[RMDB]
RNA sequence: GGGAACGACUCGAGUAGAGUCGAAAAUGCAGUCGUCUCCCCCCUGUGGGGAAGGCGAGCCACCCAGGGACGUGUCUCGGUUCAUCCAACCAAUCGAUCCUUGCGGGCGUUCGUGGCCCCUGCUGGCGCUGUGAGUAAUCCAGUGUCCUCUAGGGCCCCUUGAAUUAUAGUUCGCUAUAAUUCAAGGAAAAGAAACAACAACAACAAC
Reactivity to DMS in 0.01 (KOAc 150mM, MgCl2 10mM, bicine 150mM(pH8.5), 24C), signal-to-noise 1, nucleotides 027 to 156: u000g000c060a080g000u000c010g010u000c010u000c000c000c000c010c010c050u000g000u000g080g000g030g010a010a020g020g000c000g010a030g000c060c060a060c020c000c010a120g000g000g030a060c020g020u010g010u010c080u010c040g010g030u000u010c060a160u000c130c050a080a020c050c010a100a150u000c000g000a090u000c010c010u000u000g010c180g040g000g030c140g000u000u000c050g030u010g050g000c020c030c000c010u030g020c040u000g010g000c030g030c000u010g000u030g000a080g010u000a160a240u000c010c000a070g000u000g010u000c000c030u000c030u010a070g010g040g030c000c010
Reactivity to 2A3 in 0.01 (KOAc 150mM, MgCl2 10mM, bicine 150mM(pH8.5), 24C), signal-to-noise 3, nucleotides 027 to 156: u140g000c010a020g200u010c000g010u000c000u000c040c000c000c010c020c070u180g080u300g010g030g010g000a040a020g000g020c010g000a000g000c020c020a020c000c010c000a010g020g010g000a010c000g050u040g110u070c080u170c300g020g040u060u060c080a170u130c120c050a020a020c000c010a010a070u060c020g060a190u020c010c000u020u020g030c260g020g010g030c060g030u080u160c080g000u050g000g000c000c000c000c000u030g030c080u030g000g000c000g010c010u020g110u150g070a060g030u170a110a100u020c000c000a010g000u000g030u060c000c010u000c000u020a020g000g000g000c000c020
About this RNA:
The data come from the RNA Mapping Database (RMDB), library ARCHII. This 207-nucleotide RNA was probed chemically with DMS and 2A3. Reactivities are given for positions 27 through 156. For DMS, 4,023 sequencing reads were counted. DMS adducts were read by reverse transcription with MarathonRT. 2A3 is a SHAPE reagent: it acylates the 2'-hydroxyl of flexible nucleotides of all four kinds.